RNA sequence: GGGAACGACUCGAGUAGAGUCGAAAAGAUAUGGACUACAAGAUCGAUAAGAACAGUGUCGGAAACGACACGUUCUUUUGACGAUCCUUGUAGUCCUAAGUCAAAGAAGUUCGUUCGCGAACUUCAACACCGCAGGUGUGUUCGCACACCUGCGGUGAAAAGAAACAACAACAACAAC
Reactivity to DMS in 0.01 (KOAc 150mM, MgCl2 10mM, bicine 150mM(pH8.5), 24C), signal-to-noise 1, nucleotides 027 to 126: g020a010u000a300u000g000g010a000c000u000a010c000a000a040g000a060u000c020g000a260u020a040a020g020a030a010c010a100g000u010g020u000c000g000g000a070a050a110c010g050a020c010a030c010g000u010u000c010u010u000u010u020g010a200c140g000a010u010c220c070u000u000g010u000a000g000u000c000c000u000a000a100g000u010c030a150a080a150g010a010a010g000u000u000c000g010u010u000c240g000c020g010a030a020c010u000u000c000a080a170
Reactivity to 2A3 in 0.01 (KOAc 150mM, MgCl2 10mM, bicine 150mM(pH8.5), 24C), signal-to-noise 1, nucleotides 027 to 126: g020a000u070a050u120g000g000a010c010u000a010c000a000a010g000a020u000c070g020a060u060a220a010g000a020a030c120a300g010u030g000u030c010g060g050a050a040a050c000g000a000c000a000c030g000u020u000c030u010u050u000u050g180a100c120g000a000u000c110c000u010u000g020u010a000g000u010c000c020u000a000a010g000u000c020a000a000a120g030a000a000g000u020u010c010g010u070u130c220g000c000g260a000a000c000u000u000c000a000a000